Conditions: 150 mM KOAc, 10 mM MgCl2 and 150 mM bicine (pH 8.5), 24 C. This 177-nucleotide RNA was probed chemically with DMS and 2A3. Values cover nucleotides 27 to 126. DMS adducts were read by reverse transcription with MarathonRT. It was measured as part of the RMDB library OK2TRN. For 2A3 the reverse transcriptase was SuperScript II with manganese. The DMS profile rests on 12,200 reads.

RNA sequence: GGGAACGACUCGAGUAGAGUCGAAAAGGCCGCUCCCUCUGGCUCUUCCCGCACCUCCUCUCGGACGACAAGGGAAUCGACGAGGCGUUCUGGCCCAUUCUGGAGCUGGAUGCCAAGCCGGAGGAGGCGGAAGCUAUUAUUUCGAUAAUAGCUUCCGAAAAGAAACAACAACAACAAC
Reactivity to DMS in 0.01 (KOAc 150mM, MgCl2 10mM, bicine 150mM(pH8.5), 24C), signal-to-noise 8, nucleotides 027 to 126: g010g010c010c010g000c060u000c010c000c000u000c160u000g010g000c000u000c060u000u000c000c000c000g010c290a220c020c000u010c010c010u010c030u020c050g010g010a090c100g000a130c040a140a050g000g000g010a060a110u000c070g010a170c130g010a300g000g010c000g010u000u000c000u000g020g000c000c000c000a180u000u010c210u010g010g010a110g020c000u000g000g000a020u000g010c000c000a080a170g000c000c000g000g010a020g010g000a010g000g010
Reactivity to 2A3 in 0.01 (KOAc 150mM, MgCl2 10mM, bicine 150mM(pH8.5), 24C), signal-to-noise 7, nucleotides 027 to 126: g000g000c010c000g010c030u010c000c010c010u020c050u030g010g000c010u010c020u060u010c010c000c000g010c040a080c000c010u000c010c010u030c050u140c060g080g030a150c080g020a010c050a020a000g020g000g000a010a030u080c050g130a130c060g070a100g000g000c040g060u060u020c020u030g020g000c000c010c020a090u300u180c160u300g020g010a190g020c000u000g000g000a000u010g000c000c000a020a010g010c000c000g000g000a000g000g010a000g000g000